[RMDB]
Chemical mapping of a 177-nucleotide RNA with 2A3. Values cover nucleotides 27 to 126. As a SHAPE reagent, 2A3 marks flexible, mostly unpaired nucleotides at the ribose 2'-OH. Conditions: 150 mM KOAc, 10 mM MgCl2 and 150 mM bicine (pH 8.5), 24 C. The data come from the RNA Mapping Database (RMDB), library OK1LIB.
RNA sequence: GGGAACGACUCGAGUAGAGUCGAAAAAUCAUCUUAGGUCUUUACUUCACUAGCCUGCAAGCCUGAGAAUACUGAGAAGCCCCAUUCUCUAUUGCAGACUCAGCCUACGGAACAACCUUUUUUGUAGACGAGCUGGACUAUUCGUAGUCCAGCUCGUAAAAGAAACAACAACAACAAC
Reactivity to 2A3 in 0.01 (KOAc 150mM, MgCl2 10mM, bicine 150mM(pH8.5), 24C), signal-to-noise 2, nucleotides 027 to 126: a040u060c040a020u000c000u140u120a000g060g050u000c010u060u180u070a260c050u030u100c000a010c180u040a000g040c010c000u030g000c000a000a020g070c040c040u040g000a020g050a000a020u040a100c090u080g060a030g010a260a060g010c000c000c020c000a010u080u050c000u000c000u000a100u060u040g050c050a000g000a000c000u030c020a020g030c000c030u050a020c040g090g000a080a030c010a080a150c000c000u080u000u000u000u060u090g150u030a060g000
For 2A3 the reverse transcriptase was SuperScript II with manganese.